Chemical mapping of a 177-nucleotide RNA with DMS and 2A3. It was measured as part of the RMDB library OK1LIB. The reactions ran in a buffer of 150 mM KOAc, 10 mM MgCl2 and 150 mM bicine (pH 8.5), at 24 C.
RNA sequence: GGGAACGACUCGAGUAGAGUCGAAAAGUGGUGCUGGAAGGGGAAGAUGUCAGUAGCGAAAUUCGCACUCAGGAGGUCGCGAACGCGGCCUCGAAAGUGGCGGCUUUUCCGCGCGUUCGCGAAGCGCAGGAUCGCACUGAUUCGUCAGUGCGAUCCUAAAAGAAACAACAACAACAAC
Reactivity to DMS in 0.01 (KOAc 150mM, MgCl2 10mM, bicine 150mM(pH8.5), 24C), signal-to-noise 1, nucleotides 027 to 126: g050u050g020g030u010g000c010u000g000g000a120a010g010g010g010g010a050a000g000a060u110g010u000c080a110g070u040a110g110c100g060a010a030a170u000u000c010g020c000a030c010u010c180a190g060g000a000g050g000u020c000g000c000g000a300a000c210g070c000g060g010c000c000u000c000g000a010a100a070g080u000g020g070c000g000g000c250u000u000u000u000c070c030g000c080g040c050g050u020u000c020g000c000g000a120a050g010c080g000c010
Reactivity to 2A3 in 0.01 (KOAc 150mM, MgCl2 10mM, bicine 150mM(pH8.5), 24C), signal-to-noise 1, nucleotides 027 to 126: g070u040g020g000u070g030c020u000g030g020a070a070g000g010g010g010a010a010g000a110u180g110u130c040a030g000u030a000g030c040g020a110a090a060u190u050c020g000c000a020c010u040c030a000g020g190a050g000g070u070c020g000c050g020a080a000c200g000c000g000g000c000c040u000c010g040a020a040a000g010u030g150g030c020g040g000c010u050u050u040u060c040c000g000c000g000c050g050u020u030c040g000c020g050a000a000g080c030g000c010